[RMDB]
RNA sequence: GGGAACGACUCGAGUAGAGUCGAAAAUGGCCAGCGCGGUAUGGGAGGCGCGGGCCGCCGAUCUUCACCAGCGGCCACUGCGCAUCGAGGCCGGCGACGAGCGGGCCCGUGCGGCCUUGCAACGCUGCAUUUAACUGGCUUUCGAGCCAGUUAAAUGAAAAGAAACAACAACAACAAC
Reactivity to DMS in 0.01 (KOAc 150mM, MgCl2 10mM, bicine 150mM(pH8.5), 24C), signal-to-noise 4, nucleotides 027 to 126: u020g010g020c060c010a060g030c010g040c250g000g000u000a100u010g020g000g010a080g010g020c010g040c030g000g010g010c010c010g020c010c020g000a090u010c130u010u010c150a080c110c040a090g020c000g000g020c000c010a050c080u010g010c060g010c040a040u000c040g010a190g010g020c000c010g010g010c030g000a080c130g010a260g010c010g000g010g000c010c000c010g010u000g010c010g030g000c000c000u010u000g010c060a080a070c050g010c110u000g010
Reactivity to 2A3 in 0.01 (KOAc 150mM, MgCl2 10mM, bicine 150mM(pH8.5), 24C), signal-to-noise 3, nucleotides 027 to 126: u090g020g000c040c020a050g010c030g000c000g050g050u180a130u210g160g060g030a040g040g000c010g000c030g000g000g010c010c000g010c010c010g110a200u030c060u190u110c100a090c110c020a030g020c000g000g040c000c000a070c040u140g000c040g000c050a060u060c040g030a050g010g060c010c030g060g030c010g010a180c070g000a020g010c080g070g040g010c000c010c030g000u010g020c010g060g000c000c000u000u100g020c010a050a010c020g020c080u110g000
An RNA of 177 nucleotides, treated with DMS and 2A3 and read out base by base. The 2A3 profile rests on 3,481 reads. DMS adducts were read by reverse transcription with MarathonRT. The data come from the RNA Mapping Database (RMDB), library OK2TST. Reactivities are given for positions 27 through 126. Conditions: 150 mM KOAc, 10 mM MgCl2 and 150 mM bicine (pH 8.5), 24 C.